About this RNA:
An RNA of 177 nucleotides, treated with 2A3 and read out base by base. The RNA was probed in 150 mM KOAc, 10 mM MgCl2 and 150 mM bicine (pH 8.5) at 24 C.

RNA sequence: GGGAACGACUCGAGUAGAGUCGAAAAUCCAUUUUUAUUCAUCAGUUUAUACUUUAUUUGUCAUUUUCCUAUGGCAAAAAGGUCCUUUAUUAUUACCUGUAACCGACUAAUCCUUCCAAUGAAAUUGCCUACGGAAAACCUUCGGGUUUUCCGUAGGAAAAGAAACAACAACAACAAC
Reactivity to 2A3 in 0.01 (KOAc 150mM, MgCl2 10mM, bicine 150mM(pH8.5), 24C), signal-to-noise 2, nucleotides 027 to 126: u150c010c000a090u100u060u000u000u170a230u130u080c040a010u010c010a060g090u090u110u050a110u040a020c010u070u170u250a290u020u090u020g000u000c010a040u000u000u050u200c010c110u040a030u010g010g000c000a000a000a000a000a000g010g010u040c000c020u170u130u100a130u060u000a040u060u180a010c000c000u000g020u110a040a000c020c010g070a040c030u050a130a040u000c000c000u040u030c010c000a010a070u090g020a100a050a070u150u110g110